[RMDB]
RNA sequence: GGGAACGACUCGAGUAGAGUCGAAAAGUCGGGAUACUGCUCAAGUAUGGCGGCCAUGUCGUAGUAGUCCUUGGUGGCAUGUACCCUCACCCACGGGCGGGAGUAUACAUCCUCCUCCUUGUAGUAGCUGUCUUAGGUGUUUCGACACCUAAGACAGAAAAGAAACAACAACAACAAC
Reactivity to DMS in 0.01 (KOAc 150mM, MgCl2 10mM, bicine 150mM(pH8.5), 24C), signal-to-noise 4, nucleotides 027 to 126: g020u000c170g000g010g010a080u000a030c040u010g000c050u010c070a050a050g000u000a060u000g010g030c010g030g000c010c180a100u000g020u000c070g020u020a070g000u000a140g000u000c130c020u000u000g010g030u010g020g000c040a020u020g020u010a060c010c000c020u010c050a120c040c010c010a120c120g000g000g010c220g010g000g000a020g010u000a120u000a090c300a210u030c140c010u000c010c000u000c070c010u010u010g050u000a070g000u000a080g020
Reactivity to 2A3 in 0.01 (KOAc 150mM, MgCl2 10mM, bicine 150mM(pH8.5), 24C), signal-to-noise 3, nucleotides 027 to 126: g050u040c020g000g050g000a080u020a080c010u010g010c010u000c080a000a050g030u040a060u070g050g030c010g010g020c040c090a120u300g080u090c030g010u040a130g040u040a050g050u110c040c020u050u030g060g000u130g060g040c030a030u110g000u040a030c000c030c000u020c120a090c000c010c000a030c040g000g020g000c100g020g000g020a020g000u070a100u020a190c030a060u080c000c000u000c000c010u030c000c010u020u180g090u040a100g050u040a020g040
Source: RMDB library OK2TST, as collected in RNAgym. The record gives the reactivity of an RNA of 177 nucleotides to DMS and 2A3. The reactions ran in a buffer of 150 mM KOAc, 10 mM MgCl2 and 150 mM bicine (pH 8.5), at 24 C.